[RMDB]
RNA sequence: GGGAACGACUCGAGUAGAGUCGAAAAUAGCUCUCUGGUGUUUGCAUAGGUCGCCACGAAUGUUGGGUCCCAAGAGCCAGGAACCCUUGCCUGAAGAAGGCUAAAUACUCUUGAUGCUGGUUCCUAGUCUACUCCUAGUUUUCGAACUAGGAGUAGAAAAAGAAACAACAACAACAAC
Reactivity to DMS in 0.01 (KOAc 150mM, MgCl2 10mM, bicine 150mM(pH8.5), 24C), signal-to-noise 7, nucleotides 027 to 126: u010a100g010c040u000c010u000c040u000g010g030u000g000u000u010u000g020c120a120u010a090g010g010u000c050g000c020c030a060c080g010a100a080u010g010u000u000g010g010g000u000c020c010c020a080a100g010a110g010c040c040a050g000g010a050a080c020c010c050u000u000g010c000c000u000g000a120a130g010a150a030g000g010c010u000a010a030a040u010a080c120u000c030u000u000g010a100u000g020c040u000g010g010u000u000c000c010u000a110g010
Reactivity to 2A3 in 0.01 (KOAc 150mM, MgCl2 10mM, bicine 150mM(pH8.5), 24C), signal-to-noise 3, nucleotides 027 to 126: u070a010g010c020u010c010u010c040u040g000g010u040g080u090u130u100g050c050a070u080a130g080g020u050c030g050c100c010a030c040g090a130a070u180g040u110u060g060g030g010u030c000c010c000a020a020g070a010g020c040c020a020g010g020a040a040c010c000c000u030u040g000c000c010u030g030a090a060g120a060a000g030g000c010u000a020a020a000u090a030c040u030c030u090u100g030a040u110g040c040u050g060g000u000u020c000c000u020a050g090
Chemical mapping of a 177-nucleotide RNA with DMS and 2A3.
DMS adducts were read by reverse transcription with MarathonRT.
Reactivities are rounded to 0.1 and cut off at 0 and 3.